[RMDB]
RNA sequence: GGGAACGACUCGAGUAGAGUCGAAAAGAUAUGGACCACACCAGACAUGAAGUCUGUGUAUAUUUUCCACGUCGGAAACGACGUGGAAAAUAUACACAGGCUUCAACAGCUGGGUGGUCCUAAGUCAUCAUAGGAUAAACUUCGGUUUAUCCUAUGAAAAAGAAACAACAACAACAAC
Reactivity to DMS in 0.01 (KOAc 150mM, MgCl2 10mM, bicine 150mM(pH8.5), 24C), signal-to-noise 3, nucleotides 027 to 126: g000a060u000a300u000g010g010a000c010c000a010c010a200c020c000a010g000a060c080a290u000g000a010a010g020u000c000u000g020u000g000u010a010u000a000u000u000u000u010c000c000a000c000g040u000c000g010g000a160a090a300c000g020a010c000g080u010g010g000a010a010a000a000u000a000u000a000c000a000c010a000g010g000c000u000u000c000a010a040c280a150g000c010u000g000g000g050u010g000g010u000c000c000u000a000a070g020u000c020a120
The record gives the reactivity of an RNA of 177 nucleotides to DMS. The RNA was probed in 150 mM KOAc, 10 mM MgCl2 and 150 mM bicine (pH 8.5) at 24 C. It was measured as part of the RMDB library TTRINS.